[RMDB]
RNA sequence: GGGAACGACUCGAGUAGAGUCGAAAACCAAAAUUGGAAGUAGCCAGGGAAACAUGCCGAUAGGCAGCACAUUAACUGGGCCCAGGGGAUAAGCCUGGGAAGAACAGAGAGGGGUCCUAGGCAUGAGGCUACAAAGAUAGUUCGCUAUCUUUGUAGCAAAAGAAACAACAACAACAAC
Reactivity to DMS in 0.01 (KOAc 150mM, MgCl2 10mM, bicine 150mM(pH8.5), 24C), signal-to-noise 3, nucleotides 027 to 126: c000c020a050a070a080a140u030u010g020g020a110a120g020u010a070g030c030c020a120g000g020g000a110a070a170c070a030u000g020c030c000g020a140u010a050g000g010c040a050g000c130a100c070a090u000u010a130a140c010u000g000g000g020c000c010c000a010g000g000g000g000a170u010a100a140g010c000c010u010g000g000g000a000a030g020a100a080c020a030g000a190g010a090g000g010g000g000u000c030c020u010a140g010g010c040a040u000g010a090g000
Reactivity to 2A3 in 0.01 (KOAc 150mM, MgCl2 10mM, bicine 150mM(pH8.5), 24C), signal-to-noise 2, nucleotides 027 to 126: c000c000a080a000a020a000u200u140g060g020a080a020g140u070a030g000c020c030a050g120g000g020a000a120a020c020a010u020g000c000c030g110a140u080a080g060g000c020a000g060c050a040c000a130u080u140a120a050c020u010g010g010g000c000c000c010a000g030g000g000g060a140u130a280a030g100c010c000u000g000g000g040a020a000g030a030a010c030a020g070a000g040a050g000g060g000g000u020c000c010u000a020g040g010c010a010u030g010a020g090